[RMDB]
RNA sequence: GGGAACGACUCGAGUAGAGUCGAAAAAUGCUUCUGACCAGUAGGUAUCAUGUACUUGGGGUCACCAUCAUCAAGCCGACGGAACUUGAACCCGACAACACCAGCCUCGGUGAUGUAUGGGAUAGAUAAGUGGUGCUUGAUUCUGUCUUCAUGACCAUAAAUCAAGGCUUUUCGAAGCCUUGAUUUAAAAAGAAACAACAACAACAAC
Reactivity to 2A3 in 0.01 (KOAc 150mM, MgCl2 10mM, bicine 150mM(pH8.5), 24C), signal-to-noise 2, nucleotides 027 to 156: a000u090g000c000u070u100c040u060g030a040c010c000a090g090u080a030g060g020u030a030u150c040a130u260g080u110a060c000u090u060g030g030g020g000u030c030a010c030c010a060u150c010a020u000c000a010a000g000c010c000g130a040c040g010g080a060a110c030u010u070g010a040a010c000c010c010g000a000c000a050a000c000a000c040c010a080g180c070c090u160c120g000g010u000g000a020u010g010u010a300u150g010g020g010a040u110a050g030a010u090a090a000g000u020g040g030u100g040c000u030u000g010a000u030u000c020u060g060u030c010u080u110c130a120u090g050a040c000c010a040
Reactivity to DMS in 0.01 (KOAc 150mM, MgCl2 10mM, bicine 150mM(pH8.5), 24C), signal-to-noise 2, nucleotides 027 to 156: a050u000g020c060u000u000c030u010g030a170c020c030a170g020u000a080g010g010u000a080u000c140a110u000g060u000a000c090u010u000g020g020g040g050u000c050a040c170c040a060u000c060a150u000c020a060a050g020c000c040g020a130c150g060g010a070a050c040u000u000g000a060a160c010c010c010g000a060c020a050a090c020a020c000c000a180g050c120c140u010c140g020g020u000g000a070u000g020u000a060u000g030g020g000a100u000a090g020a130u000a070a110g000u000g010g050u000g000c040u000u010g030a090u000u020c030u020g000u000c030u010u000c070a020u010g000a060c000c030a300